[RMDB]
RNA sequence: GGGAACGACUCGAGUAGAGUCGAAAACAUCGCGUAUUCGUACGCGAUGGUAGGGCUGUUUUUCUCGCUGACAUUCAGCCCCAAACAAAAAAGUCAGCAAAAUACGCGUAUCCUUCGGGAUACGCAACAGCCUAGCGUAAUUCGUUACGCUAGGCUGAAAAGAAACAACAACAACAAC
Reactivity to 2A3 in 0.01 (KOAc 150mM, MgCl2 10mM, bicine 150mM(pH8.5), 24C), signal-to-noise 2, nucleotides 027 to 126: c000a010u000c000g030c000g020u020a030u050u110c260g050u030a000c000g010c010g010a000u000g000g040u080a080g010g000g030c010u020g010u000u020u000u020u010c070u050c100g000c010u000g000a020c010a040u000u000c010a000g000c000c010c010c060a010a040a030c040a020a010a010a000a000a010g010u020c000a000g000c030a010a010a010a010u100a010c040g010c010g000u000a000u010c000c000u000u030c110g070g000g010a000u000a000c000g000c000a000a010
Reactivity to DMS in 0.01 (KOAc 150mM, MgCl2 10mM, bicine 150mM(pH8.5), 24C), signal-to-noise 1, nucleotides 027 to 126: c000a000u000c020g000c000g030u000a030u000u010c240g040u000a000c010g020c000g000a000u000g000g020u010a100g000g000g010c000u000g000u000u000u000u000u000c060u000c240g010c010u000g010a030c000a020u000u000c000a000g000c000c000c000c140a000a000a230c050a000a000a020a000a020a050g000u000c010a020g000c010a020a030a050a080u010a040c190g000c000g000u000a000u000c000c000u000u010c130g020g020g000a020u000a000c000g000c000a010a030